[RMDB]
RNA sequence: GGGAACGACUCGAGUAGAGUCGAAAAGUAUUUGACACCGUUUAUGUGGAAGCGUUUACUUGGACCCCGAUUAAUGACGUCGGUUUAGCUCUAAUUCUUAGGUGGCCAAAGUAGAGUGUUACGUGCUGAUCAAAAGGUAACGGACAUUUGAUUCAUUCCUGUCAUGUAUCUUCGGAUACAUGACAGGAAAAGAAACAACAACAACAAC
Reactivity to 2A3 in 0.01 (KOAc 150mM, MgCl2 10mM, bicine 150mM(pH8.5), 24C), signal-to-noise 1, nucleotides 027 to 156: g030u070a120u030u080u070g070a060c000a030c010c020g040u100u090u050a110u140g180u070g050g080a050a070g030c030g110u080u240u060a060c070u050u110g130g000a050c010c010c010c000g010a020u020u210a150a120u150g140a050c100g020u000c010g000g120u030u060u220a000g010c000u000c010u070a100a080u130u050c030u100u150a010g020g050u010g000g000c030c010a040a040a000g100u100a030g010a000g010u050g000u000u010a000c020g010u010g000c010u000g020a030u230c050a010a030a030a000g000g010u010a000a000c000g000g000a000c010a010u000u010u070g050a070u050u030c010a030u040u000